[RMDB]
RNA sequence: GGGAACGACUCGAGUAGAGUCGAAAAUGACGAAGAAGCUGACCGAACAGAAGGUUCUGGACGAAGCUUGUCGCAAGAAUCUGGACGCGCUUGCGGAACUGCGCGACAUAGCGGUCCACUUCUACCACUGCCUUACCCACUUCGGUGGGUAAGGCAGAAAAGAAACAACAACAACAAC
Reactivity to 2A3 in 0.01 (KOAc 150mM, MgCl2 10mM, bicine 150mM(pH8.5), 24C), signal-to-noise 1, nucleotides 027 to 126: u070g040a010c070g080a060a060g100a010a040g010c130u070g020a040c000c040g000a060a050c040a060g120a210a010g180g040u060u070c120u110g000g070a060c040g120a110a050g000c010u020u050g000u040c010g000c050a050a000g010a040a080u110c120u110g000g040a010c010g050c020g000c200u120u180g000c000g070g000a060a120c050u150g000c030g010c020g080a070c040a000u210a010g030c010g000g030u020c010c000a020c010u020u040c000u020a150c020c010a020
Reactivity to DMS in 0.01 (KOAc 150mM, MgCl2 10mM, bicine 150mM(pH8.5), 24C), signal-to-noise 1, nucleotides 027 to 126: u000g000a100c030g030a100a060g010a010a100g040c060u010g000a100c160c030g000a080a050c100a150g000a070a100g020g010u000u000c030u010g030g000a190c090g030a160a100g010c010u000u000g010u000c000g000c070a070a030g000a050a060u000c070u020g000g040a120c030g030c030g000c120u030u000g000c050g000g000a020a180c080u000g000c160g000c000g010a030c060a120u000a030g010c020g020g010u010c000c040a050c060u000u000c010u000a080c070c100a180